Chemical mapping of a 177-nucleotide RNA with 2A3 and DMS. Source: RMDB library OK2TST, as collected in RNAgym. Reactivities are given for positions 27 through 126. The DMS profile rests on 780 reads. DMS adducts were read by reverse transcription with MarathonRT. The RNA was probed in 150 mM KOAc, 10 mM MgCl2 and 150 mM bicine (pH 8.5) at 24 C.
RNA sequence: GGGAACGACUCGAGUAGAGUCGAAAAGGUGCAAAGCAAACGCGUGCUCAAACGGGUUGACAUCAGUGUUUUUAACCUCAAAUUGACACUCCACCCCUUGCAUGGUGAGACGAACGGCAAACUCCAGGUCUGUCCACCUAUUCGUAGGUGGACAGACAAAAGAAACAACAACAACAAC
Reactivity to 2A3 in 0.01 (KOAc 150mM, MgCl2 10mM, bicine 150mM(pH8.5), 24C), signal-to-noise 1, nucleotides 027 to 126: g000g020u110g080c070a030a020a010g040c030a100a030a040c060g050c030g120u040g080c020u030c030a130a080a030c040g010g030g000u000u010g020a050c040a020u070c060a070g050u010g100u070u020u010u050u120a000a060c000c000u100c040a030a130a080u030u090g000a000c000a010c030u040c000c000a020c000c010c020c000u010u030g040c010a030u060g010g000u050g010a010g040a070c060g000a070a010c020g020g030c020a010a120a040c010u010c000c020a060g200
Reactivity to DMS in 0.01 (KOAc 150mM, MgCl2 10mM, bicine 150mM(pH8.5), 24C), signal-to-noise 1, nucleotides 027 to 126: g010g000u010g020c120a010a040a100g020c070a020a110a110c040g000c080g060u000g010c100u020c100a060a100a070c080g020g030g000u010u000g020a040c060a050u000c090a070g020u000g010u000u000u000u010u000a060a070c010c060u000c140a040a180a070u020u000g000a040c050a030c010u000c020c070a070c020c020c030c040u000u010g000c070a030u000g000g020u010g050a150g000a120c070g030a040a050c050g010g000c070a120a100a050c130u000c030c070a060g000